[RMDB]
RNA sequence: GGGAACGACUCGAGUAGAGUCGAAAAGAAAGAAAGAAGAGAGCUGGCGCAGCCGCACGGGCAACCGUCAAUCCAGCACUUCACAAGUCUUGUCGUUCUGACAGGACAUCCAUCAACCCACCGGGAAAAAAGGACUACAGCUUCGGCUGUAGUCCAAGAUGUGUUCUAUCUUCGGAUAGAACACAUCAAAAGAAACAACAACAACAAC
Reactivity to 2A3 in 0.01 (KOAc 150mM, MgCl2 10mM, bicine 150mM(pH8.5), 24C), signal-to-noise 1, nucleotides 027 to 156: g010a010a050a000g000a040a110a010g010a030a030g050a010g010a020g000c030u020g000g000c080g010c130a060g100c050c070g040c030a050c020g010g000g000c020a070a140c020c000g030u050c010a000a030u030c000c010a010g000c010a020c020u030u020c000a020c040a190a080g000u000c000u000u010g000u000c020g090u220u230c150u300g000a000c010a000g000g010a000c000a010u000c030c020a080u070c020a020a070c000c010c010a040c070c080g090g000g020a020a070a040a000a000a130g000g000a090c000u010a000c000a030g000c000u070u080c200g110g000c000u000g000u000a000g000u000c000c000a000a000